This 177-nucleotide RNA was probed chemically with DMS and 2A3. For DMS, 6,954 sequencing reads were counted. For DMS the reverse transcriptase was MarathonRT. The RNA was probed in 150 mM KOAc, 10 mM MgCl2 and 150 mM bicine (pH 8.5) at 24 C.
RNA sequence: GGGAACGACUCGAGUAGAGUCGAAAAUUAUGACUGCCACACCACCAGGAACCCGUGAUGCGUUUCCUGACUCUAACUCACCAAUCAUGGACACAGAAGUGGAAGUCCCAGAGAGAGCCUGGAGCUCAAAGUGCAGAAAGUUCGCUUUCUGCACUUUAAAAGAAACAACAACAACAAC
Reactivity to DMS in 0.01 (KOAc 150mM, MgCl2 10mM, bicine 150mM(pH8.5), 24C), signal-to-noise 4, nucleotides 027 to 126: u030u060a070u020g020a120c040u020g000c030c020a090c020a060c050c040a080c090c030a050g000g000a120a080c070c050c030g000u000g000a050u030g000c060g000u010u000u000c020c020u020g010a060c060u010c020u020a100a080c050u000c050a120c100c050a070a080u020c080a040u000g000g060a140c080a090c080a060g020a110a050g030u010g000g030a070a040g000u020c020c020c030a140g000a100g000a120g000a070g000c020c020u020g010g010a150g030c010u000c040
Reactivity to 2A3 in 0.01 (KOAc 150mM, MgCl2 10mM, bicine 150mM(pH8.5), 24C), signal-to-noise 4, nucleotides 027 to 126: u190u130a100u180g040a030c010u020g030c010c000a010c000a000c010c010a030c000c010a040g010g030a010a020c000c040c030g090u060g050a120u150g020c070g030u020u050u060c020c020u040g030a060c000u000c000u090a100a090c000u000c080a050c000c010a040a010u080c050a090u110g040g100a010c020a010c030a140g230a270a070g060u050g050g030a070a030g010u030c020c000c010a030g020a000g000a000g000a000g040c000c060u130g130g050a030g010c030u010c040